[RMDB]
RNA sequence: GGGAACGACUCGAGUAGAGUCGAAAACUCGACUGCUUAGCUACUUUGAUGCUUGUGUUAUUCAAUUUGAAGCAGAAGUUGAAAUAAGUGUUCAGUUUGCUGUCACUGGUGAAUUAAUGCUUAUUUGUAUGCUAAUUUCGUUCGCGAAAUUAGCAUAAAAAGAAACAACAACAACAAC
Reactivity to DMS in 0.01 (KOAc 150mM, MgCl2 10mM, bicine 150mM(pH8.5), 24C), signal-to-noise 3, nucleotides 027 to 126: c010u000c010g010a180c010u000g000c050u000u010a110g000c030u020a060c050u030u010u000g000a070u010g000c030u010u050g000u040g000u000u000a050u030u000c040a030a070u000u020u020g000a060a000g020c050a050g010a090a050g000u010u010g000a040a040a010u000a010a020g010u010g000u000u010c170a030g010u000u000u000g000c010u000g000u010c200a100c190u100g010g020u000g010a030a010u010u010a010a040u010g000c000u000u000a010u000u010u000g030
Reactivity to 2A3 in 0.01 (KOAc 150mM, MgCl2 10mM, bicine 150mM(pH8.5), 24C), signal-to-noise 4, nucleotides 027 to 126: c000u010c030g040a040c040u020g040c000u080u070a050g050c010u050a020c040u080u040u100g100a040u080g040c060u180u100g100u090g070u300u150a130u130u040c020a040a020u050u020u140g070a080a010g000c000a010g000a060a030g050u070u120g060a030a020a030u020a000a010g010u010g060u030u000c020a030g030u040u000u010g020c020u050g160u250c040a030c260u150g000g010u020g020a020a010u030u020a020a000u010g000c000u020u010a020u020u080u120g110

Structure probing data (DMS and 2A3) for a 177-nucleotide construct. The reactions ran in a buffer of 150 mM KOAc, 10 mM MgCl2 and 150 mM bicine (pH 8.5), at 24 C. For 2A3 the reverse transcriptase was SuperScript II with manganese. For DMS the reverse transcriptase was MarathonRT. Values cover nucleotides 27 to 126. It was measured as part of the RMDB library OK1LIB.